[RMDB]
RNA sequence: GGGAACGACUCGAGUAGAGUCGAAAAUUAAGGAAUAGACCAAGCUCUAGGUGAUUGAGAAACCCCUUUGGUAUUAGUCCUGGAGACAGGGCGACAUUGUCAAAUUGUUCGGGGACCACCUGUUAAAUUAUAUGCUACUGCAGCAGUGCUGAAAGGCCUUUAACUAAACGUUCGCGUUUAGUUAAAGAAAAGAAACAACAACAACAAC
Reactivity to 2A3 in 0.01 (KOAc 150mM, MgCl2 10mM, bicine 150mM(pH8.5), 24C), signal-to-noise 2, nucleotides 027 to 156: u160u070a060a010g060g010a030a060u040a130g020a010c000c020a070a050g020c020u030c040u100a050g040g020u050g030a130u170u130g080a180g190a190a120a090c040c010c000c030u030u060u040g040g000u040a020u050u120a010g010u000c000c000u010g000g010a010g000a000c010a000g000g000g000c050g030a030c020a040u110u130g000u070c040a050a070a060u190u100g040u210u250c080g000g000g000g030a030c000c000a010c010c000u040g010u070u050a010a100a120u160u170a140u070a000u160g040c020u040a060c050u110g000c000a000g010c030a000g010u010g080c000u010g030a050a040a000g040g000c010
Reactivity to DMS in 0.01 (KOAc 150mM, MgCl2 10mM, bicine 150mM(pH8.5), 24C), signal-to-noise 1, nucleotides 027 to 156: u010u000a090a050g020g020a150a150u000a060g010a100c040c090a140a210g000c050u000c070u000a040g020g060u000g000a140u000u000g010a260g000a120a080a230c020c000c000c030u000u000u000g010g030u000a030u000u000a090g010u000c000c020u000g020g050a290g010a200c040a020g000g090g010c020g000a100c110a050u000u000g060u000c010a040a060a060u000u000g010u000u010c020g000g000g020g030a070c030c010a070c040c000u000g000u000u000a020a070a110u010u000a110u000a080u000g010c020u000a060c170u000g000c100a090g010c040a050g000u020g010c040u000g000a050a040a110g000g020c030

Conditions: 150 mM KOAc, 10 mM MgCl2 and 150 mM bicine (pH 8.5), 24 C. An RNA of 207 nucleotides, treated with 2A3 and DMS and read out base by base. 2A3 adducts were read by reverse transcription with SuperScript II with manganese. The 2A3 profile rests on 610 reads. Values cover nucleotides 27 to 156. The DMS profile rests on 1,802 reads.